[RMDB]
RNA sequence: GGGAACGACUCGAGUAGAGUCGAAAAUGCGUGACUUUACGUUAAAGGGUUAUGUUCUUGCUACCAUUAUUGUGUUUCUGUGUGCUGUACUGAUGUAUUUGUGUUUACCUACAUUUUCUAUGGCACCUAACUUGGUUGUUCGCAACCAAGAAAAGAAACAACAACAACAAC
Reactivity to DMS in 0.01 (KOAc 150mM, MgCl2 10mM, bicine 150mM(pH8.5), 24C), signal-to-noise 5, nucleotides 027 to 129: u100g030c220g040u050g040a040c070u030u030u060a050c000g050u020u020a080a120a210g050g080g020u010u000a060u070g030u020u050c000u020u060g000c110u060a110c110c070a140u030u050a010u000u000g040u050g060u000u070u010c050u050g040u030g060u000g040c020u020g020u000a040c130u010g020a000u010g000u010a080u010u000u010g040u030g000u070u040u060a080c090c080u030a080c060a000u020u060u040u030c190u050a040u060g000g000c100a000c030c030u000a030a120
Reactivity to 2A3 in 0.01 (KOAc 150mM, MgCl2 10mM, bicine 150mM(pH8.5), 24C), signal-to-noise 9, nucleotides 027 to 129: u280g010c080g080u180g010a020c010u020u030u030a030c030g150u110u190a080a050a070g080g000g000u050u040a160u270g010u040u030c000u010u050g040c030u120a110c060c100a130u160u120a130u170u290g010u010g010u020u020u000c020u010g120u020g010u000g100c000u000g000u020a000c010u020g010a000u010g020u010a090u060u190u070g190u010g070u070u170u160a050c000c000u020a010c000a010u020u050u030u010c030u020a020u010g020g000c010a000c000c000u040a070a060
Structure probing data (DMS and 2A3) for a 170-nucleotide construct. The data come from the RNA Mapping Database (RMDB), library 15KLIB. As a SHAPE reagent, 2A3 marks flexible, mostly unpaired nucleotides at the ribose 2'-OH. The RNA was probed in 150 mM KOAc, 10 mM MgCl2 and 150 mM bicine (pH 8.5) at 24 C. For DMS, 18,242 sequencing reads were counted. The 2A3 profile rests on 18,891 reads. 2A3 adducts were read by reverse transcription with SuperScript II with manganese.